Structure probing data (2A3 and DMS) for a 177-nucleotide construct. Conditions: 150 mM KOAc, 10 mM MgCl2 and 150 mM bicine (pH 8.5), 24 C. The 2A3 profile rests on 4,107 reads. Values are in units of 0.01, from 0 to 300, in steps of 10. It was measured as part of the RMDB library TTRDES. Values cover nucleotides 27 to 126.
RNA sequence: GGGAACGACUCGAGUAGAGUCGAAAAAAGAUAUGGAGAAUGGACGAGCUUGGAUUUAUACACGAAACUGAGUCGGAAACGACUCAGUAGUAGUGUAUUGUCAGCUCGGUACAUUCUCCUAAGUCAACAUAGUGUCAGUCUUCGGACUGACACUAUGAAAAGAAACAACAACAACAAC
Reactivity to 2A3 in 0.01 (KOAc 150mM, MgCl2 10mM, bicine 150mM(pH8.5), 24C), signal-to-noise 1, nucleotides 027 to 126: a000a000g090a050u110a050u170g000g000a000g000a000a000u020g010g010a020c000g020a010g040c050u140u160g080g000a040u280u300u180a020u020a000c020a000c020g020a000a010a000c020u000g000a010g000u000c000g000g070a060a080a040c000g000a000c000u000c000a000g010u000a000g000u010a000g000u000g010u020a000u000u010g000u000c000a000g000c000u000c000g000g000u050a000c000a000u010u010c000u000c000c000u000a000a000g010u000c000a010a050
Reactivity to DMS in 0.01 (KOAc 150mM, MgCl2 10mM, bicine 150mM(pH8.5), 24C), signal-to-noise 3, nucleotides 027 to 126: a080a050g000a050u000a300u000g000g000a020g010a020a000u010g000g000a230c020g000a020g010c000u010u000g040g010a010u000u000u000a000u000a000c010a000c000g000a180a260a170c010u010g000a000g030u000c000g010g000a120a130a210c020g020a010c010u000c000a000g000u000a020g000u000a050g000u010g010u010a000u000u010g000u000c000a030g020c000u000c000g000g000u010a090c020a020u000u000c000u000c010c010u000a010a090g020u010c040a180a270